[RMDB]
RNA sequence: GGGAACGACUCGAGUAGAGUCGAAAACUUUGCACCUGGUGGUUGUACAAUUAGAAAAACACUACCCUAAUAAAACUAUAGUCUUUAAGCAACCCUCAGGAGGGGACCUAGAAGUUACAAUGCAUAGCCCUGCAUAGCUAUUCGUAGCUAUGCAGGGAAAAGAAACAACAACAACAAC
Reactivity to DMS in 0.01 (KOAc 150mM, MgCl2 10mM, bicine 150mM(pH8.5), 24C), signal-to-noise 2, nucleotides 027 to 126: c080u000u000u000g010c010a080c070c010u000g030g050u000g000g010u000u000g010u000a030c160a100a040u010u000a110g000a080a170a110a070a030c050a050c070u000a130c030c030c020u010a120a120u040a090a140a070a060c120u010a010u020a060g000u000c060u000u010u000a080a080g010c000a020a010c000c000c020u010c010a090g010g010a190g000g000g000g000a140c030c020u010a040g030a040a100g000u010u000a020c030a050a070u000g000c010a030u010a080g000
Reactivity to 2A3 in 0.01 (KOAc 150mM, MgCl2 10mM, bicine 150mM(pH8.5), 24C), signal-to-noise 3, nucleotides 027 to 126: c000u040u030u240g040c020a030c040c000u010g060g000u040g020g020u000u040g010u050a060c070a080a120u130u100a060g090a060a060a000a040a010c080a010c060u090a050c000c010c030u050a130a100u070a180a160a060a010c050u030a030u070a150g070u080c060u070u150u080a060a000g000c020a050a010c010c000c000u000c000a000g000g000a030g000g030g030g020a000c010c030u100a050g020a100a020g030u060u020a060c100a070a080u040g030c030a030u060a060g020
Structure probing data (DMS and 2A3) for a 177-nucleotide construct. Reactivities are given for positions 27 through 126. The 2A3 profile rests on 2,584 reads. Conditions: 150 mM KOAc, 10 mM MgCl2 and 150 mM bicine (pH 8.5), 24 C. High DMS reactivity at an A or C suggests that its Watson-Crick edge is free.